The data come from the RNA Mapping Database (RMDB), library OK2TST. Chemical mapping of a 177-nucleotide RNA with DMS and 2A3. Values cover nucleotides 27 to 126. For DMS, 777 sequencing reads were counted. The RNA was probed in 150 mM KOAc, 10 mM MgCl2 and 150 mM bicine (pH 8.5) at 24 C.
[RMDB]
RNA sequence: GGGAACGACUCGAGUAGAGUCGAAAAAUUGGAGAUUACGUGUAUAACUACCUGUAUUAAAUUUAUUCUCUCUAUAUACGUUCGAAUAUUGCAUUUAAAAAUAGCAAAACAUAUACUAUGAGUUGACGGAUAUGUAGAACUUCGGUUCUACAUAUCCAAAAGAAACAACAACAACAAC
Reactivity to DMS in 0.01 (KOAc 150mM, MgCl2 10mM, bicine 150mM(pH8.5), 24C), signal-to-noise 1, nucleotides 027 to 126: a060u020u000g030g030a150g010a080u000u000a010c020g020u030g000u000a080u020a060a140c170u000a050c020c050u000g010u010a050u020u000a040a030a130u000u010u000a160u070u000c020u000c020u020c030u000a080u010a120u000a040c110g000u000u020c020g010a060a120u000a090u000u000g000c030a110u000u000u000a030a050a070a070a080u000a080g010c030a030a050a070a110c100a040u020a070u030a040c070u010a090u010g010a070g010u000u000g010a050c170
Reactivity to 2A3 in 0.01 (KOAc 150mM, MgCl2 10mM, bicine 150mM(pH8.5), 24C), signal-to-noise 1, nucleotides 027 to 126: a000u150u110g090g000a180g020a040u080u130a070c010g010u040g010u120a060u030a230a060c030u020a060c000c020u050g020u110a070u010u160a130a120a170u070u140u070a110u100u000c000u000c000u000c000u050a020u010a020u000a120c020g030u030u090c000g060a120a000u120a030u080u110g030c000a010u000u030u240a100a150a050a040a000u110a020g000c010a010a020a020a020c000a000u090a000u000a100c040u050a060u250g030a000g030u070u070g000a010c040